An RNA of 177 nucleotides, treated with 2A3 and DMS and read out base by base.
The reactions ran in a buffer of 150 mM KOAc, 10 mM MgCl2 and 150 mM bicine (pH 8.5), at 24 C.

RNA sequence: GGGAACGACUCGAGUAGAGUCGAAAAGAACAGCUUAAGGAACUGCUGGUCAACGGUAGCGACAACGAGGUGAAGACUUUCGAGGACAAGAAGACAGGCGAGAUUACUGAACGUAUGGUCCUUGGAAGCAACCUAUGGACUUCGGUCCAUAGGUUGCAAAAGAAACAACAACAACAAC
Reactivity to 2A3 in 0.01 (KOAc 150mM, MgCl2 10mM, bicine 150mM(pH8.5), 24C), signal-to-noise 1, nucleotides 027 to 126: g060a000a000c040a020g040c040u190u060a040a020g180g040a070a000c030u030g000c000u020g000g080u060c080a070a080c050g000g000u110a020g060c020g070a050c000a050a060c050g020a000g090g030u080g210a050a000g000a040c000u030u030u020c000g040a030g000g000a000c000a000a030g060a110a010g050a000c000a060g010g000c110g070a010g000a010u000u270a110c020u000g070a290a050c060g010u080a120u140g130g000u000c000c000u000u000g000g000a000a060
Reactivity to DMS in 0.01 (KOAc 150mM, MgCl2 10mM, bicine 150mM(pH8.5), 24C), signal-to-noise 1, nucleotides 027 to 126: g000a090a150c000a070g000c000u010u000a140a150g010g010a290a010c070u090g000c000u000g040g070u000c050a200a000c000g040g000u000a000g060c000g000a110c070a000a120c000g000a050g000g080u000g060a080a040g000a100c070u000u000u000c000g000a000g000g000a040c000a050a000g000a180a060g000a000c050a020g000g000c170g000a000g000a290u040u020a300c050u000g010a000a150c010g000u030a180u000g010g000u020c000c010u000u000g030g010a040a010
DMS (dimethyl sulfate) methylates the pairing face of unpaired adenines and cytosines.